[RMDB]
RNA sequence: GGGAACGACUCGAGUAGAGUCGAAAAGUCAUUAACGCGUGUGCACUCUCUAACACGAAUUACGCAGUUAUUUUCGACUUUACUCGAGUCGUUAUAGCGUGAUAUGAGAGAGUAAUCCGCGACCAAAUAAAUUGACUUCUUUCGAGAAGUCAAUUUAAAAAGAAACAACAACAACAAC
Reactivity to DMS in 0.01 (KOAc 150mM, MgCl2 10mM, bicine 150mM(pH8.5), 24C), signal-to-noise 2, nucleotides 027 to 126: g000u020c180a120u010u010a010a040c130g010c000g020u000g000u000g000c120a080c000u010c000u000c010u010a190a050c030a020c020g010a210a100u010u010a060c210g000c090a100g000u000u000a060u000u000u000u000c000g010a010c000u000u000u000a010c020u010c010g010a000g000u000c000g000u000u000a020u000a120g020c000g020u020g010a030u010a100u010g020a040g000a040g010a030g010u000a150a160u000c020c000g010c000g010a140c020c040a040a060a120